[RMDB]
RNA sequence: GGGAACGACUCGAGUAGAGUCGAAAAGAAACUGUGGUUUCGUUAGUGAAAAAAUUUGACGUUUUGGUCAACAGCGUUACUUACGCGUGCUCCCAGAUGUCAAUGCCGAUGAUGGGAACGUGAGCUGAUACGGAGGGUAGUUCGCUACCCUCCGUAUAAAAGAAACAACAACAACAAC
Reactivity to DMS in 0.01 (KOAc 150mM, MgCl2 10mM, bicine 150mM(pH8.5), 24C), signal-to-noise 3, nucleotides 027 to 126: g000a050a030a050c060u010g010u000g020g020u000u020u010c030g010u020u020a040g000u000g000a000a040a080a060a060a150u010u010u000g000a010c030g000u000u020u010u010g000g000u000c090a020a080c040a030g000c010g000u010u040a080c160u020u020a140c040g010c010g010u000g010c160u000c020c010c010a020g000a200u030g000u000c020a010a040u040g020c160c120g020a100u000g000a170u000g010g000g010a070a060c040g010u000g000a090g000c010u000g000
Reactivity to 2A3 in 0.01 (KOAc 150mM, MgCl2 10mM, bicine 150mM(pH8.5), 24C), signal-to-noise 4, nucleotides 027 to 126: g050a040a050a000c040u050g000u100g290g060u030u000u000c020g010u060u060a120g010u130g150a040a000a010a010a000a100u040u020u030g030a060c070g060u020u030u160u240g060g010u090c040a010a000c000a040g070c000g090u120u080a200c050u210u080a020c100g010c020g040u050g040c010u050c000c000c000a000g020a060u140g010u030c080a170a090u220g080c080c070g040a110u110g020a020u040g030g000g040a070a000c040g020u020g020a040g020c040u000g000